This 177-nucleotide RNA was probed chemically with DMS and 2A3.
RNA sequence: GGGAACGACUCGAGUAGAGUCGAAAAGAUAUGGAAGGAACUACGAGAACUGCUUCCGUUGAAAUCGGAAACGAUGGAGGAAGCACCCCUCGCCUUCCUAAGUCAAAGCCAGGGUUCGCCCUGGCAACUAUUAUUGUGCCUUCGGGCACAAUAAUAGAAAAGAAACAACAACAACAAC
Reactivity to DMS in 0.01 (KOAc 150mM, MgCl2 10mM, bicine 150mM(pH8.5), 24C), signal-to-noise 3, nucleotides 027 to 126: g010a010u000a300u010g000g010a020a020g000g010a100a080c120u010a300c040g000a030g020a060a090c300u000g010c010u000u000c000c000g010u000u010g000a090a150a020u000c010g000g000a110a070a150c000g020a020u000g000g000a070g040g000a000a010g000c000a020c140c110c140c060u010c020g000c000c010u000u010c000c000u000a020a070g010u000c050a080a060a130g010c000c000a000g010g000g020u000u010c280g030c010c000c000u000g000g020c000a000a020
Reactivity to 2A3 in 0.01 (KOAc 150mM, MgCl2 10mM, bicine 150mM(pH8.5), 24C), signal-to-noise 2, nucleotides 027 to 126: g020a020u110a020u160g000g010a000a010g040g010a100a080c130u160a040c300g000a010g040a080a020c080u020g010c010u010u000c010c010g040u100u050g010a040a030a010u020c010g010g050a060a050a020c010g010a010u020g040g010a010g000g010a000a000g000c000a010c020c000c000c000u010c010g010c010c000u000u010c000c010u010a120a020g070u020c030a120a070a000g010c000c000a000g000g030g000u060u120c290g110c000c000c000u000g000g000c000a000a000

The 2A3 profile rests on 5,089 reads. The reactions ran in a buffer of 150 mM KOAc, 10 mM MgCl2 and 150 mM bicine (pH 8.5), at 24 C.